Chemical mapping of a 177-nucleotide RNA with DMS and 2A3. The 2A3 profile rests on 1,323 reads. Values are in units of 0.01, from 0 to 300, in steps of 10.
RNA sequence: GGGAACGACUCGAGUAGAGUCGAAAAGCCGGGAUUGUUUACGGUGGUCGUUGAAGUCAUAGCCAUAAGAUGAACGUUAGACUAUGGAAAAUCUAUGAAAGUUUAUCAUAGUUAUUGUGCGACCGAGCUAUAUUUAAUAUUUCGAUAUUAAAUAUAGAAAAGAAACAACAACAACAAC
Reactivity to DMS in 0.01 (KOAc 150mM, MgCl2 10mM, bicine 150mM(pH8.5), 24C), signal-to-noise 5, nucleotides 027 to 126: g030c010c020g000g000g010a090u000u010g000u000u010u010a050c060g010g010u010g010g000u000c010g010u000u010g000a080a110g020u010c010a030u000a020g000c020c030a080u020a060a080g010a100u030g010a120a090c140g000u010u010a040g010a030c010u000a020u010g010g010a090a060a060a050u020c030u000a090u030g010a050a130a130g020u020u020u020a040u010c000a010u000a010g000u010u020a060u010u020g010u000g000c010g000a060c020c010g010a100g020
Reactivity to 2A3 in 0.01 (KOAc 150mM, MgCl2 10mM, bicine 150mM(pH8.5), 24C), signal-to-noise 2, nucleotides 027 to 126: g010c000c000g050g000g030a140u000u080g030u050u030u080a080c020g030g070u090g010g020u000c000g000u020u070g100a080a020g010u000c010a080u070a010g040c020c000a060u040a230a010g030a030u080g060a110a000c030g000u000u040a020g000a010c000u000a000u020g000g000a050a050a000a020u020c000u030a040u080g050a060a120a040g040u100u110u000a050u020c000a010u010a000g010u020u040a080u080u130g040u040g000c000g010a010c010c010g000a010g000